[RMDB]
RNA sequence: GGGAACGACUCGAGUAGAGUCGAAAAUGAGAAGGUUCAGGCCGCCGUCAAGGCCGCGGCCCACAAGCAGCAGAAGGCGCUGAACCAUAUCGAGGAAGCGCACGUCUGAUUUCCAAUUCCAGGGAAAUACUAUACUCCUCUUCGGAGGAGUAUAGUAAAAAGAAACAACAACAACAAC
Reactivity to DMS in 0.01 (KOAc 150mM, MgCl2 10mM, bicine 150mM(pH8.5), 24C), signal-to-noise 5, nucleotides 027 to 126: u030g000a100g010a150a160g010g000u010u000c090a080g010g000c080c020g020c020c070g000u000c100a120a130g010g010c020c120g020c050g000g010c030c020c080a080c160a100a110g000c060a070g010c010a060g000a080a060g000g000c010g020c000u000g000a200a140c020c020a070u010a080u010c110g000a120g020g020a170a060g010c050g010c040a070c110g010u000c030u010g000a100u010u000u000c010c010a040a140u010u000c040c040a170g000g000g010a040a040a120
Reactivity to 2A3 in 0.01 (KOAc 150mM, MgCl2 10mM, bicine 150mM(pH8.5), 24C), signal-to-noise 2, nucleotides 027 to 126: u220g010a050g020a180a060g060g010u060u070c030a010g030g030c010c010g020c010c010g090u100c070a090a100g090g000c020c000g000c000g040g000c020c030c020a060c040a030a060g040c060a000g020c010a000g020a080a030g050g020c020g000c020u020g010a030a010c000c020a030u080a060u210c090g000a050g040g010a050a010g010c010g000c060a040c070g110u010c020u040g060a160u020u030u030c000c000a040a090u090u020c030c020a030g090g010g000a020a060a030